[RMDB]
RNA sequence: GGGAACGACUCGAGUAGAGUCGAAAAUGCGCGAUGAGGUCUUGGCGACUAUCCAUGAGCAGACCUCUGCCUUGACGGCGAAGUUGGUAGAUAUUGAGGAGCGUCAGCAAGCCUUUGCCCAGAGCACGCCAGACUAUCAGUUCGCUGAUAGUCUGGCAAAAGAAACAACAACAACAAC
Reactivity to 2A3 in 0.01 (KOAc 150mM, MgCl2 10mM, bicine 150mM(pH8.5), 24C), signal-to-noise 1, nucleotides 027 to 126: u110g010c040g000c030g050a130u120g050a010g020g040u050c020u050u200g210g050c030g060a050c060u020a040u080c060c040a120u210g020a000g040c060a060g000a000c000c010u010c010u010g000c010c000u020u100g080a040c040g060g030c030g020a050a040g010u100u120g070g040u030a040g060a190u080a020u200u240g090a060g000g040a020g010c010g050u040c060a010g000c030a060a020g000c010c000u060u000u070g000c030c010c030a030g000a030g100c100a030c170
Reactivity to DMS in 0.01 (KOAc 150mM, MgCl2 10mM, bicine 150mM(pH8.5), 24C), signal-to-noise 1, nucleotides 027 to 126: u020g000c040g010c030g010a020u000g010a010g010g010u000c000u020u030g000g020c000g010a200c080u000a120u020c060c080a060u000g000a200g010c070a070g030a040c030c000u000c020u000g060c000c010u000u000g000a130c190g000g000c020g000a010a040g000u000u000g000g000u020a080g020a050u030a230u000u000g000a070g010g000a130g040c060g000u010c030a090g000c040a020a070g010c130c010u010u010u000g000c000c040c000a100g000a090g030c110a110c140
Chemical mapping of a 177-nucleotide RNA with 2A3 and DMS. DMS (dimethyl sulfate) methylates the pairing face of unpaired adenines and cytosines. The reactions ran in a buffer of 150 mM KOAc, 10 mM MgCl2 and 150 mM bicine (pH 8.5), at 24 C. Source: RMDB library OK2TST, as collected in RNAgym.